[RMDB]
This 177-nucleotide RNA was probed chemically with 2A3 and DMS. The DMS profile rests on 16,517 reads. For 2A3 the reverse transcriptase was SuperScript II with manganese. The RNA was probed in 150 mM KOAc, 10 mM MgCl2 and 150 mM bicine (pH 8.5) at 24 C.
RNA sequence: GGGAACGACUCGAGUAGAGUCGAAAAGAUAUGGAACUUUGUCAGCUGUUGCAGCGUUGAAACUUUAACAUCGGAAACGAUGUUAAAGUGGAGCUGGCACUCAGCUUGGAUUUAAGUUCCUAAGUCACAAUUAUACACAGUUCGCUGUGUAUAAUUGAAAAGAAACAACAACAACAAC
Reactivity to 2A3 in 0.01 (KOAc 150mM, MgCl2 10mM, bicine 150mM(pH8.5), 24C), signal-to-noise 5, nucleotides 027 to 126: g020a020u080a070u250g010g000a000a020c010u000u030u040g020u030c000a010g000c010u020g030u070u030g000c010a000g000c020g190u220u050g020a030a000a000c000u020u000u000a000a000c000a010u000c000g010g020a110a050a050c020g010a000u010g000u010u000a000a000a000g000u000g000g000a000g000c010u100g300g180c010a040c070u090c010a010g030c010u070u170g120g000a040u300u300u210a010a000g000u000u000c000c010u040a250a050g020u030c000a010
Reactivity to DMS in 0.01 (KOAc 150mM, MgCl2 10mM, bicine 150mM(pH8.5), 24C), signal-to-noise 7, nucleotides 027 to 126: g000a050u000a300u000g000g010a020a010c010u000u000u000g000u000c000a050g000c000u000g010u010u010g010c010a040g010c000g010u010u010g000a170a190a030c000u010u000u000a000a000c000a010u000c000g010g000a170a120a260c000g010a020u000g000u000u000a000a000a010g000u000g010g000a080g020c000u000g010g010c020a030c290u000c000a010g000c010u000u000g020g000a020u000u000u000a020a010g020u000u000c000c000u000a030a110g010u000c040a230